[RMDB]
RNA sequence: GGGAACGACUCGAGUAGAGUCGAAAACACGCGGCGCGCUUCCAUAGUCCGCGAUGAUAGUUCGUUUGUAUCCACGCCGCCCAGCGUCACUUCCGCUGUCCGAUAGCCUUCGGUGCCGUUAGGCUGCGAUAGCAGUCGGAUUCGUCCGACUGCUAUCAAAAGAAACAACAACAACAAC
Reactivity to DMS in 0.01 (KOAc 150mM, MgCl2 10mM, bicine 150mM(pH8.5), 24C), signal-to-noise 6, nucleotides 027 to 126: c060a120c070g020c010g010g000c300g010c120g000c060u010u040c060c050a070u010a130g010u020c020c060g010c060g020a060u020g000a130u030a050g010u020u020c060g010u020u000u010g010u020a060u010c010c030a060c040g000c020c040g010c040c020c030a050g010c040g000u000c050a060c050u020u020c110c080g020c030u010g000u020c030c040g010a070u010a090g010c030c030u000u010c040g000g010u010g000c010c010g010u010u040a070g000g010c040u000g020c160
Reactivity to 2A3 in 0.01 (KOAc 150mM, MgCl2 10mM, bicine 150mM(pH8.5), 24C), signal-to-noise 9, nucleotides 027 to 126: c050a000c020g030c010g040g000c030g010c020g010c080u160u040c060c030a070u090a080g070u080c020c020g020c030g020a030u050g020a030u060a070g130u060u050c060g030u060u090u220g080u060a060u020c020c000a030c040g010c000c010g010c010c010c000a020g020c020g030u030c010a020c060u100u020c020c020g020c030u040g060u090c020c020g070a080u080a050g010c000c000u040u070c050g060g040u080g010c000c010g050u050u050a030g030g000c020u020g000c010